Background: An RNA of 177 nucleotides, treated with DMS and 2A3 and read out base by base. Values cover nucleotides 27 to 126. The 2A3 profile rests on 5,510 reads. DMS adducts were read by reverse transcription with MarathonRT.
[RMDB]
RNA sequence: GGGAACGACUCGAGUAGAGUCGAAAAGAUUACGUGUCGUUGUGGAAUCGAUACUACGCAUGAGAUUCCAAGGUCUCUGUAGUACGUCCGCUGGUGACGUCUUUGGAGUCACGUUCGAUAUACGAAAGGUAUGUACUACGUUCGCGUAGUACAUACCAAAAGAAACAACAACAACAAC
Reactivity to DMS in 0.01 (KOAc 150mM, MgCl2 10mM, bicine 150mM(pH8.5), 24C), signal-to-noise 5, nucleotides 027 to 126: g020a110u020u020a050c100g010u010g000u010c020g000u020u000g000u010g000g010a080a060u020c030g000a070u000a020c050u010a040c030g030c190a100u020g000a030g010a020u000u020c110c210a110a090g020g000u000c010u000c020u000g000u010a010g000u020a010c030g010u000c000c010g020c040u000g000g000u000g000a010c000g000u000c020u010u010u040g010g000a090g010u000c000a040c020g000u060u000c010g000a040u010a060u030a070c060g000a080a090a100
Reactivity to 2A3 in 0.01 (KOAc 150mM, MgCl2 10mM, bicine 150mM(pH8.5), 24C), signal-to-noise 5, nucleotides 027 to 126: g080a040u150u200a060c060g020u030g010u020c020g010u060u120g000u010g020g050a030a040u140c050g040a020u000a030c030u020a010c010g020c100a060u120g000a000g000a020u080u040c130c080a070a050g110g000u010c000u000c020u080g010u010a000g000u020a000c000g020u010c000c000g010c080u090g080g040u070g020a010c040g110u050c030u090u100u150g040g000a010g010u020c000a010c060g020u070u070c010g010a020u030a020u030a140c030g060a060a020a030
The data come from the RNA Mapping Database (RMDB), library OK1LIB.